[RMDB]
RNA sequence: GGGAACGACUCGAGUAGAGUCGAAAACCUCACUACAUUUUACUGUUCCUAAAUAAUUUGUGACAGGUACAGUAAAACGUAUUGCAAGGUUUAUCAGUUCCUAUAAACAGGUAAAUAACAAUAUAUGAAAAGCAAAGACUGUUCGCAGUCUUUGCAAGUAUAACUAGCAGUUCGCUGCUAGUUAUACAAAAGAAACAACAACAACAAC
Reactivity to 2A3 in 0.01 (KOAc 150mM, MgCl2 10mM, bicine 150mM(pH8.5), 24C), signal-to-noise 7, nucleotides 027 to 156: c000c000u020c000a010c010u020a000c000a040u000u000u000u000a000c000u000g010u020u060c000c000u050a070a120a120u180a120a260u190u220u300g130u050g060a070c060a080g000g000u000a000c000a000g000u000a000a000a000a000c020g000u000a000u010u020g030c080a060a050g040g010u030u020u010a180u130c020a030g010u000u010c010c000u060a090u150a110a090a010c070a010g060g090u100a090a110a090u220a150a080c050a120a060u150a020u060a080u270g090a130a090a030a010g000c000a010a000a000g000a000c000u010g030u050u060c180g010c070a000g000u000c000u000u000u000g000c000a000a000
Reactivity to DMS in 0.01 (KOAc 150mM, MgCl2 10mM, bicine 150mM(pH8.5), 24C), signal-to-noise 2, nucleotides 027 to 156: c010c000u010c000a080c040u000a000c000a040u010u010u010u000a000c000u000g020u000u000c010c010u000a110a250a150u020a180a180u000u000u000g050u000g010a150c300a050g000g070u010a010c010a020g030u000a010a010a030a020c020g010u020a000u000u010g060c060a130a000g010g040u000u000u000a070u020c100a120g010u000u000c010c030u000a190u010a100a140a110c080a100g010g010u010a080a090a110u000a080a140c040a030a130u000a150u010a050u010g000a060a090a100a210g000c000a010a010a010g020a020c000u010g010u000u020c300g030c050a010g000u000c010u010u000u000g000c000a010a040
An RNA of 207 nucleotides, treated with 2A3 and DMS and read out base by base. Source: RMDB library M2RFOK, as collected in RNAgym. DMS adducts were read by reverse transcription with MarathonRT. The reactions ran in a buffer of 150 mM KOAc, 10 mM MgCl2 and 150 mM bicine (pH 8.5), at 24 C. For DMS, 2,318 sequencing reads were counted.